[RMDB]
The record gives the reactivity of an RNA of 177 nucleotides to DMS. Conditions: 150 mM KOAc, 10 mM MgCl2 and 150 mM bicine (pH 8.5), 24 C.
RNA sequence: GGGAACGACUCGAGUAGAGUCGAAAAACACACUCCCACUUGCCAGUCAGUCGAUCGCCACGAACACACUGGGAAGAGGAGAAGGAGGGAGUCCUUCCCCCGCUCGCACCCGAAGCACUCUCCGCCAUAUGGGAGGGAGUUUCGACUCCCUCCCAUAAAAAGAAACAACAACAACAAC
Reactivity to DMS in 0.01 (KOAc 150mM, MgCl2 10mM, bicine 150mM(pH8.5), 24C), signal-to-noise 2, nucleotides 027 to 126: a100c060a110c250a130c040u000c000c000c040a110c050u010u000g000c010c020a000g000u040c190a160g020u000c070g050a100u000c130g010c100c120a140c040g020a070a070c050a100c240a040c010u000g030g000g000a040a020g020a270g010g000a020g020a060a040g000g030a110g010g000g000a050g000u000c020c100u000u000c010c000c000c040c060g020c000u000c060g000c020a060c050c000c020g030a030a080g000c030a060c020u000c020u000c000c000g020c070c070a110